[RMDB]
RNA sequence: GGGAACGACUCGAGUAGAGUCGAAAAGAUAUGGAAGCCAUUAAGGUCUUUGAUCUCGGAAACGAGGGAGACCUAAUCGGCUUCCUAAGUCAAAAGGAGCUAAUAUCCUUCGGGAUAUUAGCUCCAACAACUAGCGAAGCUUCGGCUUCGCUAGUUGAAAAGAAACAACAACAACAAC
Reactivity to DMS in 0.01 (KOAc 150mM, MgCl2 10mM, bicine 150mM(pH8.5), 24C), signal-to-noise 1, nucleotides 027 to 126: g000a080u000a300u010g000g010a010a000g010c000c000a010u000u020a130a060g020g030u000c000u000u030u000g030a040u020c010u000c010g000g000a130a120a240c010g000a010g010g000g000a030g000a020c030c000u000a010a000u010c140g070g010c000u000u000c000c010u000a010a050g010u000c050a090a120a110a040g020g000a000g000c000u000a000a020u000a000u000c000c000u000u030c120g050g000g000a010u000a020u000u000a010g020c000u000c000c000a010a060